[RMDB]
Structure probing data (DMS) for a 177-nucleotide construct. DMS adducts were read by reverse transcription with MarathonRT. For DMS, 622 sequencing reads were counted.
RNA sequence: GGGAACGACUCGAGUAGAGUCGAAAAAAAGAUAUGGAUCAGUAAGCUCUUGGAUUUACUAGGAACCGUGUAUCGGAAACGAUACACUCAGUACUAGUUGUCAGAGCAAACUGAUCCUAAGUCAAAACUUUCAAGGAAUCUUCGGAUUCCUUGAAAGAAAAGAAACAACAACAACAAC
Reactivity to DMS in 0.01 (KOAc 150mM, MgCl2 10mM, bicine 150mM(pH8.5), 24C), signal-to-noise 1, nucleotides 027 to 126: a040a110a160g000a040u040a300u000g010g000a000u000c000a000g000u010a120a300g000c000u000c000u000u000g070g000a000u000u010u000a000c000u000a000g020g050a160a090c300c300g000u000g000u000a000u010c000g000g000a150a070a070c010g000a010u000a000c000a000c000u010c040a070g000u000a090c020u000a000g000u000u000g010u000c010a010g000a040g010c000a040a100a030c000u000g000a000u000c000c000u000a000a090g000u010c040a120a060a190a100

Record summary
The RNA was probed in 150 mM KOAc, 10 mM MgCl2 and 150 mM bicine (pH 8.5) at 24 C. Reactivities are given for positions 27 through 126. Source: RMDB library TTRDES, as collected in RNAgym.